The record gives the reactivity of an RNA of 177 nucleotides to DMS and 2A3.
For DMS the reverse transcriptase was MarathonRT.
The reactions ran in a buffer of 150 mM KOAc, 10 mM MgCl2 and 150 mM bicine (pH 8.5), at 24 C.
[RMDB]
RNA sequence: GGGAACGACUCGAGUAGAGUCGAAAAAUUAUGAGAUUUUUCAGGAUGGAUUCUUUUAGGUAUCUAUCGAAACCAUUCUGAUGAUCAAUACAGUAUUUUUGUCGCAUUCUUAUUACGGUACGUGCAAGUUUCUUUCUCCUUUCGAGGAGAAAGAAACAAAAGAAACAACAACAACAAC
Reactivity to DMS in 0.01 (KOAc 150mM, MgCl2 10mM, bicine 150mM(pH8.5), 24C), signal-to-noise 2, nucleotides 027 to 126: a010u030u000a000u000g000a290g000a000u020u000u000u020u000c010a020g000g000a010u020g000g000a090u000u000c000u010u000u010u000a000g010g000u040a040u060c000u000a000u020c200g000a040a030a060c010c000a000u000u000c010u000g000a020u000g000a000u000c000a060a130u020a090c300a050g000u000a000u010u000u000u000u010g030u040c050g020c140a090u010u000c030u000u010a080u000u000a020c120g010g030u000a040c070g060u010g020c110a090a080
Reactivity to 2A3 in 0.01 (KOAc 150mM, MgCl2 10mM, bicine 150mM(pH8.5), 24C), signal-to-noise 4, nucleotides 027 to 126: a000u090u070a040u090g060a050g010a060u020u040u020u060u030c000a000g020g000a000u000g000g020a030u010u040c040u020u170u060u070a040g050g070u220a140u230c000u010a020u050c040g000a010a010a010c000c000a000u000u000c000u010g000a000u010g010a000u000c000a030a020u120a080c060a020g130u080a050u000u050u010u100u090g170u090c040g000c110a040u070u020c010u050u080a130u080u120a100c060g010g030u050a050c010g000u030g060c050a100a080